[RMDB]
RNA sequence: GGGAACGACUCGAGUAGAGUCGAAAAAUAGUGGACAAAUAUCUGGAUAUGUGGACAUUAUUCAUAUACGUGGUGCUAUAAUUAUCAUAUGAAAUUGAGUGGAGAUACAUAUGAUUGAUAGUUACAGCCUACUAAGGUGGUUCGCCACCUUAGUAGGAAAAGAAACAACAACAACAAC
Reactivity to 2A3 in 0.01 (KOAc 150mM, MgCl2 10mM, bicine 150mM(pH8.5), 24C), signal-to-noise 7, nucleotides 027 to 126: a000u070a010g050u060g040g060a030c020a010a120a020u090a060u080c120u170g110g060a040u030a030u180g080u040g030g030a010c010a030u030u110a030u040u130c100a050u140a020u030a150c130g070u170g020g010u030g030c010u030a030u020a140a110u110u100a030u010c010a010u010a000u000g090a110a160a070u140u090g040a080g160u160g070g090a170g020a040u080a070c010a000u000a010u020g010a000u000u050g040a020u010a040g020u030u100a040c030a010g050
Reactivity to DMS in 0.01 (KOAc 150mM, MgCl2 10mM, bicine 150mM(pH8.5), 24C), signal-to-noise 3, nucleotides 027 to 126: a020u010a020g020u010g000g020a070c020a050a060a030u000a010u000c090u000g010g000a040u010a000u010g010u010g000g000a050c020a030u000u000a020u000u010c070a110u070a070u020a060c170g010u040g000g010u000g020c010u000a010u010a030a060u040u010a000u000c000a000u000a020u000g000a080a030a110u020u010g000a190g020u030g010g010a120g000a070u000a180c020a010u000a000u000g000a010u000u010g000a030u030a020g020u000u010a040c050a060g010